An RNA of 207 nucleotides, treated with DMS and 2A3 and read out base by base. The 2A3 profile rests on 7,297 reads. DMS adducts were read by reverse transcription with MarathonRT. Source: RMDB library M2RFPK, as collected in RNAgym. Conditions: 150 mM KOAc, 10 mM MgCl2 and 150 mM bicine (pH 8.5), 24 C.
RNA sequence: GGGAACGACUCGAGUAGAGUCGAAAAAGGUGAUUUCUCCUGCACCUUUAUCAAUGGAGGAACUCGACUUUGCUGUGGGUCCCAAAGGGACCUUAGGUGCAGACAGUUACCGGCGGUGAACUGUGAGCAUAGGUUCGUGUCUUCGGACACGAACCAAGUUGUAAUUUAACUUCGGUUAAAUUACAACAAAAGAAACAACAACAACAAC
Reactivity to DMS in 0.01 (KOAc 150mM, MgCl2 10mM, bicine 150mM(pH8.5), 24C), signal-to-noise 2, nucleotides 027 to 156: a040g010g030u000g010a240u000u000u000c000u000c020c010u000g030c050a080c060c030u000u010u000a120u020c150a110a110u010g010g000a120g020g000a040a080c100u000c040g030a060c040u000u000u000g000c010u000g020u000g020g010g000u000c010c030c020a060a140a180g040g020g000a020c010c000u000u000a010g030g010u000g000c030a100g010a040c050a050g020u000u000a040c020c030g030g020c090g030g000u000g000a050a070c010u000g020u000g000a280g030c020a080u010a140g010g020u000u010c000g060u000g010u000c010u000u000c300g040g000a030c000a010c000g010a000a000c000c010a000a040
Reactivity to 2A3 in 0.01 (KOAc 150mM, MgCl2 10mM, bicine 150mM(pH8.5), 24C), signal-to-noise 5, nucleotides 027 to 156: a000g020g000u030g010a040u030u050u000c020u030c000c010u100g040c030a030c000c000u100u180u120a090u050c050a050a070u230g030g000a030g010g010a030a030c040u040c070g080a070c050u080u080u150g020c040u040g020u100g050g000g000u010c000c000c030a130a130a110g010g000g000a010c000c000u010u060a030g000g000u020g000c000a010g030a120c000a010g000u020u030a050c020c010g160g010c090g110g000u080g070a030a020c010u030g020u040g060a020g030c060a080u090a170g010g000u000u000c000g000u010g000u000c000u010u020c140g090g000a010c000a000c000g000a000a000c000c000a000a000